[RMDB]
RNA sequence: GGGAACGACUCGAGUAGAGUCGAAAAUCAGAAACUGUCACAGAAACUUAAGUUCUUUGGCGGGUUAGAUGAAUCUAAUCCAUGGUCAUCCACUUUAUAAAUACAUAAAAGGACAGUUUUAUGAUUGCCAUCCACAGACUUUCGAGUCUGUGGAUGGAAAAGAAACAACAACAACAAC
Reactivity to DMS in 0.01 (KOAc 150mM, MgCl2 10mM, bicine 150mM(pH8.5), 24C), signal-to-noise 1, nucleotides 027 to 126: u000c000a120g030a030a010a010c000u000g000u000c050a120c140a260g000a070a120a270c170u040u070a010a030g000u010u060c040u000u020u000g010g000c050g000g000g020u000u000a030g040a020u000g000a250a100u000c020u000a000a040u000c000c000a110u110g050g040u000c030a000u000c190c080a020c000u000u000u000a110u000a060a100a080u030a260c070a120u000a000a090a170a190g020g000a030c000a000g010u000u000u000u000a030u000g000a000u000u000g000
Reactivity to 2A3 in 0.01 (KOAc 150mM, MgCl2 10mM, bicine 150mM(pH8.5), 24C), signal-to-noise 5, nucleotides 027 to 126: u000c000a000g060a010a000a000c010u000g000u000c000a040c020a250g140a130a080a010c050u090u050a030a030g010u110u030c060u060u070u010g000g020c010g000g000g010u000u000a040g010a060u180g220a170a170u100c010u000a000a020u010c000c030a080u170g160g000u010c000a010u000c050c010a020c020u030u080u050a120u040a110a130a040u200a050c050a050u200a130a120a030a010g030g010a000c000a000g010u000u000u010u000a200u000g000a000u000u050g010
About this RNA
Structure probing data (DMS and 2A3) for a 177-nucleotide construct. The reactions ran in a buffer of 150 mM KOAc, 10 mM MgCl2 and 150 mM bicine (pH 8.5), at 24 C.